[RMDB]
The data come from the RNA Mapping Database (RMDB), library OK2TST. An RNA of 177 nucleotides, treated with 2A3 and DMS and read out base by base. DMS adducts were read by reverse transcription with MarathonRT. The RNA was probed in 150 mM KOAc, 10 mM MgCl2 and 150 mM bicine (pH 8.5) at 24 C. 2A3 adducts were read by reverse transcription with SuperScript II with manganese.
RNA sequence: GGGAACGACUCGAGUAGAGUCGAAAAGCAGGGCCCGCAGCAGGCUGACACGGGCCUUCUGGCCGCCGGAGAGCGCCCCCGGCAGCUUGUCCGCCUGACUGGUUAGCUCCACCUGCGCCAGUGCUGCUAAUCACACACUGUUCGCAGUGUGUGAUUAAAAAGAAACAACAACAACAAC
Reactivity to 2A3 in 0.01 (KOAc 150mM, MgCl2 10mM, bicine 150mM(pH8.5), 24C), signal-to-noise 1, nucleotides 027 to 126: g020c010a000g070g020g050c080c010c000g000c040a000g050c000a010g050g060c010u040g000a030c010a020c050g010g020g070c030c000u100u010c050u070g000g000c010c000g000c000c010g040g010a040g000a030g060c020g080c010c010c030c000c000g040g010c010a010g010c050u060u070g000u020c020c020g000c000c030u080g040a200c010u000g000g040u070u110a010g000c020u100c030c020a190c010c010u040g010c010g020c020c010a030g010u060g050c060u010g010c020
Reactivity to DMS in 0.01 (KOAc 150mM, MgCl2 10mM, bicine 150mM(pH8.5), 24C), signal-to-noise 3, nucleotides 027 to 126: g000c050a040g010g020g010c020c050c070g020c080a080g000c020a050g020g000c000u000g000a030c030a050c120g020g020g010c010c030u010u010c100u010g020g040c030c030g010c020c010g010g020a080g000a210g010c120g000c040c020c040c020c030g000g000c020a070g000c110u010u010g010u000c020c120g010c000c000u000g000a140c040u000g000g000u000u010a160g020c040u000c020c060a110c120c020u000g000c050g010c250c050a080g010u000g020c040u000g010c080